The record gives the reactivity of an RNA of 177 nucleotides to 2A3 and DMS. The DMS profile rests on 1,660 reads. DMS adducts were read by reverse transcription with MarathonRT.
RNA sequence: GGGAACGACUCGAGUAGAGUCGAAAAGCGGCUCAACGCGGCUUAAGUAAUUUGCGAUUCCGUAUUUAUAUGUGCGUCCAGGAGCCUCCGCCCUCAUGGAUGUGACUCAUAGGUGAGGCACAUAUUCCUGCAAGGUGCAAUUCGUUGCACCUUGCAGAAAAGAAACAACAACAACAAC
Reactivity to 2A3 in 0.01 (KOAc 150mM, MgCl2 10mM, bicine 150mM(pH8.5), 24C), signal-to-noise 4, nucleotides 027 to 126: g000c020g010g010c000u060c080a030a050c060g000c020g080g000c010u070u080a090a000g030u030a050a190u110u170u200g060c040g070a090u100u130c050c010g020u050a200u050u260u020a070u040a010u040g030u010g040c030g110u040c000c050a050g070g050a020g000c000c000u000c010c030g050c020c010c010u130c050a120u180g030g010a010u030g110u100g130a160c000u000c050a060u130a160g180g080u200g140a000g010g140c000a000c000a000u050a080u020u070c010
Reactivity to DMS in 0.01 (KOAc 150mM, MgCl2 10mM, bicine 150mM(pH8.5), 24C), signal-to-noise 1, nucleotides 027 to 126: g020c050g050g000c180u010c100a050a050c020g030c000g000g010c090u000u020a020a090g040u120a060a120u000u000u000g000c040g000a110u020u030c020c030g040u000a050u000u020u030a020u000a050u000g040u010g030c000g010u020c000c020a150g000g000a050g000c010c000u000c030c040g050c080c100c100u010c150a100u010g000g020a000u000g020u050g000a130c050u020c020a070u110a090g000g020u050g000a060g000g000c000a050c000a040u000a030u000u010c070